[RMDB]
The record gives the reactivity of an RNA of 207 nucleotides to 2A3.
Conditions: 150 mM KOAc, 10 mM MgCl2 and 150 mM bicine (pH 8.5), 24 C.
Reactivities are rounded to 0.1 and cut off at 0 and 3.
RNA sequence: GGGAACGACUCGAGUAGAGUCGAAAACACAAUUCUCUAAGCGAUGAGAAGCGUGUGGAAAAUUAGGGAAGGGCUACGGCUAUUAUCCUAAGAAAGCUUAUCUACAAGCGGAGGUAUUCUCAGAACGAAAACCAUUUGGCGUUCGCGCCAAAUGGAACAGCACUUACCUGUUCGCAGGUAAGUGCUGAAAAGAAACAACAACAACAAC
Reactivity to 2A3 in 0.01 (KOAc 150mM, MgCl2 10mM, bicine 150mM(pH8.5), 24C), signal-to-noise 1, nucleotides 027 to 156: c070a010c010a030a120u100u020c010u000c000u070a190a050g140c050g050a090u060g010a060g000a040a010g020c040g020u010g000u080g010g090a080a150a020a070u060u070a000g040g000g040a080a020g130g000g010c000u040a000c160g040g000c030u020a040u110u010a060u070c000c000u030a040a000g010a020a090a000g020c000u100u000a090u100c060u110a060c040a120a000g010c050g010g030a040g000g070u140a100u120u010c040u010c010a050g050a050a080c100g050a120a050a030a060c000c000a010u000u000u000g040g000c030g000u000u070c170g040c000g000c020c010a000a000a000u000g000g000a000a000